The record gives the reactivity of an RNA of 177 nucleotides to DMS and 2A3. 2A3 is a SHAPE reagent: it acylates the 2'-hydroxyl of flexible nucleotides of all four kinds. It was measured as part of the RMDB library OK1LIB. DMS adducts were read by reverse transcription with MarathonRT. The reactions ran in a buffer of 150 mM KOAc, 10 mM MgCl2 and 150 mM bicine (pH 8.5), at 24 C. For 2A3, 1,555 sequencing reads were counted. The DMS profile rests on 3,275 reads.
RNA sequence: GGGAACGACUCGAGUAGAGUCGAAAAAGCGGAGCAUGUUGCGUGUGUUUGGUCUAACACUUGAAGAUCAACUAUUGCGAAUCUUUGCUCGAUUUGUCUUACCAAUUUAGCGAUAGCGUGCUACACCUCAGGGGAGGAGUUUCGACUCCUCCCCUGAAAAAGAAACAACAACAACAAC
Reactivity to DMS in 0.01 (KOAc 150mM, MgCl2 10mM, bicine 150mM(pH8.5), 24C), signal-to-noise 3, nucleotides 027 to 126: a110g000c090g000g000a020g000c050a010u010g030u000u040g000c060g030u000g020u010g000u000u010u000g010g010u000c010u000a190a030c120a210c180u060u010g010a100a040g000a030u010c010a030a030c060u010a010u000u060g040c040g020a000a030u050c070u030u000u000g000c000u020c010g000a150u000u030u000g000u010c000u030u000a230c060c010a150a110u060u030u010a050g010c000g030a070u000a090g060c110g040u000g000c000u020a060c210a090c120c030
Reactivity to 2A3 in 0.01 (KOAc 150mM, MgCl2 10mM, bicine 150mM(pH8.5), 24C), signal-to-noise 4, nucleotides 027 to 126: a000g140c170g030g010a040g030c050a020u050g030u060u110g040c030g020u080g000u010g010u060u070u040g030g020u020c040u080a220a020c110a070c160u140u280g130a100a010g040a020u020c000a000a020c030u090a050u100u240g000c010g040a040a050u040c090u040u110u120g020c040u010c040g000a040u060u030u170g060u000c010u030u050a080c010c000a130a170u050u040u080a070g010c030g040a090u010a030g050c000g020u020g000c030u020a070c020a120c070c040